[RMDB]
RNA sequence: GGGAACGACUCGAGUAGAGUCGAAAACAAAGGGGUUUCGGCUCCCAAGCGGUCUGACGCCCUGUCACGGUUUCCCUGCGGAGCUGUGCCCGGGGCCCCGACGGAUUCCGGUCCGUCGCAGGGGUGGGGGAUCUAUCUUAUUCGUAAGAUAGAUCCCAAAAGAAACAACAACAACAAC
Reactivity to 2A3 in 0.01 (KOAc 150mM, MgCl2 10mM, bicine 150mM(pH8.5), 24C), signal-to-noise 9, nucleotides 027 to 126: c050a010a090a030g070g020g010g010u070u150u160c010g020g000c010u030c000c010c010a050a030g070c070g050g030u030c040u050g040a030c030g070c040c040c080u100g050u050c020a030c100g040g000u060u130u070c010c000c020u060g030c170g010g000a020g000c010u010g020u030g010c010c010c010g010g000g020g000c010c000c000c000g010a000c000g010g000a010u090u040c070c140g110g020u000c000c000g010u010c010g010c060a040g010g010g010g010u110g100g050
Reactivity to DMS in 0.01 (KOAc 150mM, MgCl2 10mM, bicine 150mM(pH8.5), 24C), signal-to-noise 6, nucleotides 027 to 126: c060a080a100a120g010g000g000g010u000u010u000c010g000g000c030u000c010c020c070a130a150g010c110g010g010u020c030u010g010a070c080g000c090c070c070u030g000u010c020a060c100g000g000u010u010u000c010c010c070u020g020c190g000g000a020g000c020u010g010u000g000c020c010c000g010g010g010g010c010c000c010c020g000a010c000g000g000a020u000u020c230c090g010g010u000c000c000g010u000c010g010c160a110g010g000g010g030u000g010g010